Source: RMDB libraries RFM100 and RFMREP, as collected in RNAgym.
Structure probing data (DMS and 2A3) for a 177-nucleotide construct.
For DMS the reverse transcriptase was MarathonRT.
The 2A3 profile rests on 1,229 reads.
The reactions ran in a buffer of 150 mM KOAc, 10 mM MgCl2 and 150 mM bicine (pH 8.5), at 24 C.
[RMDB]
RNA sequence: GGGAACGACUCGAGUAGAGUCGAAAACUUUGGGAUAGAGAGUGUAUGCUUGUCUACGUAUGGGUAUUUAUAAGUAAAUGGAGAGUUGUAAUGACGAGAAGUUUACAAAGUAAUAUCUGUUCCCGUACUAGGCCACAAUUUUCGAAUUGUGGCCUAGAAAAGAAACAACAACAACAAC
Reactivity to DMS in 0.01 (KOAc 150mM, MgCl2 10mM, bicine 150mM(pH8.5), 24C), signal-to-noise 2, nucleotides 027 to 126: c120u000u030u030g020g030g020a130u000a020g000a240g010a040g020u030g000u000a060u010g000c020u020u000g020u020c030u010a070c150g010u030a080u020g000g000g000u000a020u010u020u000a000u030a070a300g010u000a000a010a000u010g000g030a230g000a140g000u030u020g000u010a060a070u120g000a000c000g000a040g010a190a170g000u000u000u010a000c040a050a080a130g000u000a020a020u000a030u000c030u030g000u000u000c000c000c000g010u010a120
Reactivity to 2A3 in 0.01 (KOAc 150mM, MgCl2 10mM, bicine 150mM(pH8.5), 24C), signal-to-noise 3, nucleotides 027 to 126: c020u080u000u210g070g060g120a180u110a060g130a030g000a030g020u130g030u160a070u290g000c000u080u010g080u210c020u030a000c030g100u120a030u160g020g030g020u040a000u040u140u000a030u010a140a030g020u010a050a010a010u010g000g060a070g000a000g140u020u010g040u260a100a060u100g000a000c010g010a010g000a300a040g010u010u000u000a000c000a000a120a000g000u010a010a010u000a000u070c000u010g040u010u000c000c000c000g000u000a040